Background:
The record gives the reactivity of an RNA of 177 nucleotides to 2A3 and DMS. For DMS, 1,302 sequencing reads were counted. The RNA was probed in 150 mM KOAc, 10 mM MgCl2 and 150 mM bicine (pH 8.5) at 24 C. The data come from the RNA Mapping Database (RMDB), library OK1LIB.

RNA sequence: GGGAACGACUCGAGUAGAGUCGAAAACGCCUGUGUGCAGGCCCCUCGGACACCCCAGGACGGGGGCUCCUAGACCAACAGUGGACGCGAGCCCACCCGGCUGCACUUACCCAACCUUCCAAGCCACAUACCUCCACGUAUUCGUACGUGGAGGUAUAAAAGAAACAACAACAACAAC
Reactivity to 2A3 in 0.01 (KOAc 150mM, MgCl2 10mM, bicine 150mM(pH8.5), 24C), signal-to-noise 3, nucleotides 027 to 126: c050g040c000c000u080g010u010g040u070g100c000a000g050g000c010c000c000c000u020c020g020g000a030c020a120c040c030c010c020a010g040g050a020c040g030g000g000g000g010c010u020c000c000u070a080g020a090c000c010a040a150c080a170g070u070g090g020a020c030g030c050g040a010g000c000c000c000a100c030c020c000g000g000c020u020g000c000a010c020u010u040a060c000c010c010a000a070c020c000u040u000c000c010a060a050g030c020c020a060c010
Reactivity to DMS in 0.01 (KOAc 150mM, MgCl2 10mM, bicine 150mM(pH8.5), 24C), signal-to-noise 1, nucleotides 027 to 126: c230g000c030c010u010g060u010g000u010g070c000a010g010g010c120c010c000c000u020c030g000g000a070c130a090c030c030c030c010a120g000g000a150c040g000g000g000g010g000c050u000c020c080u000a100g000a070c020c070a030a080c140a100g030u000g000g010a090c040g000c220g000a150g130c080c000c030a070c020c030c080g000g000c010u050g000c030a070c050u010u000a110c000c030c010a000a080c070c040u020u000c030c050a090a160g030c050c030a070c100